Structure probing data (2A3) for a 207-nucleotide construct. 2A3 adducts were read by reverse transcription with SuperScript II with manganese. For 2A3, 1,226 sequencing reads were counted. Source: RMDB library M2RFPK, as collected in RNAgym.
RNA sequence: GGGAACGACUCGAGUAGAGUCGAAAACUGCAUCACCUGAUCACUGAUGGCUCAACGGUAUCCGGCGGUACAACUGAAUACUUGUAGCUGCCUUUUGAGCGGGUUGGCUGCAAUCCGAAACGGAGAGAAAACCUAAUUACGUUCGCGUAAUUAGGAAGUGCACAGUGUAGUUCGCUACACUGUGCACAAAAGAAACAACAACAACAAC
Reactivity to 2A3 in 0.01 (KOAc 150mM, MgCl2 10mM, bicine 150mM(pH8.5), 24C), signal-to-noise 2, nucleotides 027 to 156: c040u070g000c030a050u030c010a010c020c000u040g010a070u040c030a000c040u020g000a020u020g060g000c010u010c040a050a040c060g080g000u070a020u010c020c010g050g000c060g070g080u120a100c100a120a010c110u130g040a150a020u070a110c010u000u100g000u030a010g020c000u010g000c070c000u030u050u090u110g070a070g040c030g010g010g000u140u240g040g000c040u000g000c000a010a040u030c030c030g040a130a080a100c100g010g020a040g010a020g040a020a070a060a070c000c000u000a010a000u000u000a000c010g000u000u010c090g010c000g060u000a000a000u000u000a000g000g010a000a030